[RMDB]
RNA sequence: GGGAACGACUCGAGUAGAGUCGAAAACUGAACUUCGGUUCAGGGCCCCGGGGUCCGAUGAGCUGUAGAGAUUCUAUGAAGAUACUGAAGCCUCCACGGUAUUGGAGAAUCGAUCAGCGAGGACGGAGGCACCCUCGGUGGGUACUUCGGUACCCAACGUCAAACCUCAAUUCGUUGAGGUUUGACGAAAAGAAACAACAACAACAAC
Reactivity to 2A3 in 0.01 (KOAc 150mM, MgCl2 10mM, bicine 150mM(pH8.5), 24C), signal-to-noise 2, nucleotides 027 to 156: c010u010g000a020a000c010u070u080c300g100g010u010u000c000a010g010g000g030c030c010c010c020g000g000g000g030u040c020c010g100a300u160g100a090g000c020u010g030u220a050g010a010g010a190u000u000c010u050a300u100g000a000a000g000a020u000a000c000u010g040a220a030g010c000c000u000c010c000a010c010g010g000u000a000u000u020g020g000a010g000a010a010u000c010g020a080u040c000a000g000c010g010a050g000g000a000c010g000g010a010g000g000c000a020c010c010c020u070c080g010g110u060g020g000g000u010a000c010u020u060c240g050g000u010a010c010c000c000a010a010
Reactivity to DMS in 0.01 (KOAc 150mM, MgCl2 10mM, bicine 150mM(pH8.5), 24C), signal-to-noise 1, nucleotides 027 to 156: c010u000g020a020a010c020u000u000c180g060g030u010u000c010a020g000g010g010c030c080c000c050g040g050g020g010u010c070c030g020a170u010g010a220g020c030u010g000u020a060g000a300g010a090u000u000c000u000a270u020g000a230a300g000a050u010a070c020u000g000a020a100g030c000c000u000c030c020a300c020g000g000u000a060u010u000g000g010a080g000a040a010u000c000g000a300u000c000a030g040c030g000a150g000g000a020c080g060g030a030g010g030c020a300c060c000c010u000c080g070g000u000g030g010g050u000a000c010u000u020c220g030g020u000a040c000c000c000a000a020